[RMDB]
RNA sequence: GGGAACGACUCGAGUAGAGUCGAAAAUCCGAGAUCGCUCCACGCUGCGAGGAUCUCGUAGACCCCUCGGGGAUCCGGCUUCGGUGGAAGCCCUUCCCUGUGCCCCAGGAUCACAUCGAAGAGGGAGCCUCGUCAACAUCUUCGGAUGUUGACGAGGAAAAGAAACAACAACAACAAC
Reactivity to DMS in 0.01 (KOAc 150mM, MgCl2 10mM, bicine 150mM(pH8.5), 24C), signal-to-noise 1, nucleotides 027 to 126: u000c070c000g000a020g000a000u010c000g000c010u010c010c030a150c300g000c260u020g000c120g010a010g030g010a020u000c010u010c050g020u010a180g020a190c030c000c020c040u010c020g010g000g000g000a030u000c060c300g000g000c000u000u010c000g030g000u000g010g000a050a020g000c010c030c100u000u010c000c020c010u020g020u020g010c090c000c010c040a160g020g050a080u000c140a090c060a250u020c060g000a070a040g000a080g010g030g020a140g020
Reactivity to 2A3 in 0.01 (KOAc 150mM, MgCl2 10mM, bicine 150mM(pH8.5), 24C), signal-to-noise 1, nucleotides 027 to 126: u020c020c020g000a000g000a000u030c060g080c300u040c020c020a040c050g300c220u250g000c170g030a020g000g000a000u030c000u000c000g000u010a060g070a020c000c000c000c000u030c020g040g000g000g000a020u000c010c110g030g000c000u050u000c010g300g250u300g250g030a030a020g000c000c000c010u000u030c000c000c000u000g050u020g020c020c000c020c040a000g170g000a060u090c030a010c080a160u110c060g060a110a050g020a100g070g010g000a000g010